Annotation: The record gives the reactivity of an RNA of 177 nucleotides to 2A3 and DMS. Values are in units of 0.01, from 0 to 300, in steps of 10. For DMS the reverse transcriptase was MarathonRT. Conditions: 150 mM KOAc, 10 mM MgCl2 and 150 mM bicine (pH 8.5), 24 C.
[RMDB]
RNA sequence: GGGAACGACUCGAGUAGAGUCGAAAACUCCGAGGGCACCCUGCACACCGCGCUGAUGCGGUCGUGCACCGGCUGGCCCUCCGGGGUCUGGAUCGACCAGCCGCGACGCACCGCCCCGGAUGGCUCGGAGUAAGGAGCAUUUCGAUGCUCCUUACUCAAAAGAAACAACAACAACAAC
Reactivity to 2A3 in 0.01 (KOAc 150mM, MgCl2 10mM, bicine 150mM(pH8.5), 24C), signal-to-noise 3, nucleotides 027 to 126: c020u030c000c010g020a170g030g040g010c020a050c020c000c030u020g000c010a010c000a000c010c000g040c020g040c210u300g130a190u300g010c000g010g000u010c010g000u000g000c000a000c000c010g000g020c040u060g110g020c010c010c010u000c000c010g010g000g010g010u040c100u130g060g000a090u080c050g040a070c030c000a020g020c030c030g040c050g020a040c030g000c020a040c030c040g000c010c010c020c000g030g000a040u030g040g000c050u030c080g030
Reactivity to DMS in 0.01 (KOAc 150mM, MgCl2 10mM, bicine 150mM(pH8.5), 24C), signal-to-noise 4, nucleotides 027 to 126: c070u000c010c020g020a070g010g020g030c030a110c050c010c060u000g000c000a010c020a060c000c000g000c020g020c300u020g020a130u000g020c010g000g000u000c190g060u050g010c010a030c110c140g000g020c150u000g020g000c020c020c050u000c020c010g010g000g000g000u000c040u000g010g030a090u000c080g000a080c030c010a070g010c060c040g010c080g020a090c100g010c160a100c080c080g000c010c000c010c020g010g010a030u000g010g030c070u000c110g010